Conditions: 150 mM KOAc, 10 mM MgCl2 and 150 mM bicine (pH 8.5), 24 C. The record gives the reactivity of an RNA of 177 nucleotides to 2A3. The 2A3 profile rests on 848 reads.
[RMDB]
RNA sequence: GGGAACGACUCGAGUAGAGUCGAAAAAACCUCUUCGUUGAGGCCCCAUCCGGCGAAAGGGGGAUGCCUACUCUGGCGAUUAAAGUGGAGCGGACCAGGGUUGGAGCAGUCUGUUCUUUCACGCUCUCCUGUAAAAUCAGUUCGCUGAUUUUACAGGAAAAGAAACAACAACAACAAC
Reactivity to 2A3 in 0.01 (KOAc 150mM, MgCl2 10mM, bicine 150mM(pH8.5), 24C), signal-to-noise 1, nucleotides 027 to 126: a010a030c060c010u070c050u060u000c050g230u120u100g070a010g030g020c110c000c000c010a040u080c020c000g000g000c070g040a060a050a040g040g030g020g000g020a000u080g030c000c010u010a010c030u000c000u020g000g030c000g060a040u140u300a230a060a170g120u260g050g020a080g090c060g000g040a040c000c010a000g030g030g000u000u120g070g000a100g060c040a010g090u070c020u140g120u090u000c000u010u110u040c070a030c090g030c010u000c010u020

It was measured as part of the RMDB library VIROID. Reactivities are given for positions 27 through 126.